[RMDB]
RNA sequence: GGGAACGACUCGAGUAGAGUCGAAAAAGGGCGGUGAUGCUGAGCUUUCUGCCCAGGAGGAAUGAGCUUUCAAGCUCUCAGCAGGGUGUCAGGCUUGGGGAUUUGAGCAUCCACUGCUCAAAGUCCAGGCUAUUCUCCAGUCCUCACGGCAGCCACAAAUUAGGAUACCGUUCGCGGUAUCCUAAUUAAAAGAAACAACAACAACAAC
Reactivity to 2A3 in 0.01 (KOAc 150mM, MgCl2 10mM, bicine 150mM(pH8.5), 24C), signal-to-noise 2, nucleotides 027 to 156: a000g080g000g000c040g050g030u070g000a040u070g020c000u010g010a010g050c010u070u070u010c030u050g010c050c000c000a010g140g020a000g010g010a090a120u060g010a010g000c000u100u300u210c160a100a050g000c010u010c020u020c050a070g050c110a080g060g010g020u040g060u090c050a060g000g020c000u000u010g000g000g010g030a140u020u000u010g000a000g000c010a040u130c130c130a130c230u040g000c000u000c000a000a000a000g060u020c000c000a010g030g020c000u010a040u120u040c040u000c000c000a010g050u050c000c010u020c000a010c020g040g000c020a010g040c040c010a100c010a010
Reactivity to DMS in 0.01 (KOAc 150mM, MgCl2 10mM, bicine 150mM(pH8.5), 24C), signal-to-noise 2, nucleotides 027 to 156: a070g000g040g040c010g020g040u000g020a100u000g030c000u000g000a160g010c030u000u000u000c050u000g020c050c000c030a110g000g000a090g010g010a110a140u010g010a070g030c020u000u010u020c150a080a110g030c010u010c030u000c010a060g020c080a120g030g030g000u010g010u000c180a170g010g030c020u010u010g030g000g010g020a160u010u000u000g000a060g010c000a070u010c170c210a120c170u000g000c010u010c000a010a010a030g000u000c010c010a070g020g020c000u010a040u000u000c010u030c000c020a110g000u000c020c010u000c010a080c080g010g040c010a040g010c020c050a060c090a080
An RNA of 207 nucleotides, treated with 2A3 and DMS and read out base by base. Reactivities are given for positions 27 through 156. For 2A3 the reverse transcriptase was SuperScript II with manganese. High DMS reactivity at an A or C suggests that its Watson-Crick edge is free. For DMS the reverse transcriptase was MarathonRT.